[RMDB]
RNA sequence: GGGAACGACUCGAGUAGAGUCGAAAAUCUGCCCAGGGAUUAUCUACGCAGGCCCCCCAGCAUCAAUAUUUCAGGAUUCUUGGAUUGGAAGAUAAUCACAGAGUGUUUGGGGAUUGGAGUCCCAAGGGGACGACAGAAAUUUCGAUUUCUGUCGUCCAAAAGAAACAACAACAACAAC
Reactivity to DMS in 0.01 (KOAc 150mM, MgCl2 10mM, bicine 150mM(pH8.5), 24C), signal-to-noise 7, nucleotides 027 to 126: u000c050u000g000c020c050c060a160g010g020g000a080u010u010a040u010c030u000a110c220g010c070a080g000g000c050c040c020c020c010c030a090g010c050a070u000c050a050a080u000a070u010u010u000c100a080g010g010a090u000u000c020u000u010g010g000a080u000u000g010g010a120a070g000a070u000a030a030u000c040a080c080a090g000a070g010u000g010u000u010u000g010g000g000g000a070u000u000g010g000a110g010u000c010c000c010a080a080g010g010
Reactivity to 2A3 in 0.01 (KOAc 150mM, MgCl2 10mM, bicine 150mM(pH8.5), 24C), signal-to-noise 2, nucleotides 027 to 126: u000c010u060g070c010c020c020a040g030g020g010a030u100u120a080u230c030u060a060c100g000c160a100g240g100c050c000c000c090c010c020a000g020c000a010u050c030a020a090u060a130u210u170u080c050a010g090g000a060u080u040c010u050u160g060g010a090u020u090g050g010a040a010g000a050u110a080a020u010c020a000c030a100g100a020g050u050g060u080u110u080g030g000g000g030a000u020u080g050g040a040g020u000c000c000c010a020a020g090g050
This 177-nucleotide RNA was probed chemically with DMS and 2A3.
The 2A3 profile rests on 2,588 reads.
Conditions: 150 mM KOAc, 10 mM MgCl2 and 150 mM bicine (pH 8.5), 24 C.